[RMDB]
RNA sequence: GGGAACGACUCGAGUAGAGUCGAAAAGCGUACUACCGAUAACAAAUCCACAAUGAUGGCUAUUCGAGGUCUCCCAAAUAGGAGACCUAAGACAGAUAGCUUGAGUGGCGCAUUAACGCAAAAAUCGGUAUCGCAAACUUUGACUUCGGUCAAAGAAGUGGAAGACAUUGUUCGCAAUGUCUUCCACAAAAGAAACAACAACAACAAC
Reactivity to 2A3 in 0.01 (KOAc 150mM, MgCl2 10mM, bicine 150mM(pH8.5), 24C), signal-to-noise 2, nucleotides 027 to 156: g000c000g100u080a120c020u020a000c020c000g020a010u040a180a080c150a170a050a180u120c030c000a030c010a120a230u240g010a040u130g010g000c010u000a000u030u150c000g010a000g000g010u000c000u010c020c020c000a120a100a060u290a060g000g000a000g000a000c000c000u000a000a000g040a010c070a040g080a030u000a000g000c000u000u000g020a060g000u000g060g020c010g030c070a090u250u300a300a010c160g000c000a170a170a000a000a000u000c000g000g020u010a020u300c010g000c000a060a000a010c010u040u010u000g000a000c000u020u010c230g090g000u010c000a040a000a000g060a070a000
This 207-nucleotide RNA was probed chemically with 2A3.
Reactivities are given for positions 27 through 156.
Conditions: 150 mM KOAc, 10 mM MgCl2 and 150 mM bicine (pH 8.5), 24 C.
For 2A3, 709 sequencing reads were counted.
2A3 adducts were read by reverse transcription with SuperScript II with manganese.
Values are in units of 0.01, from 0 to 300, in steps of 10.
Source: RMDB library RNAMAK, as collected in RNAgym.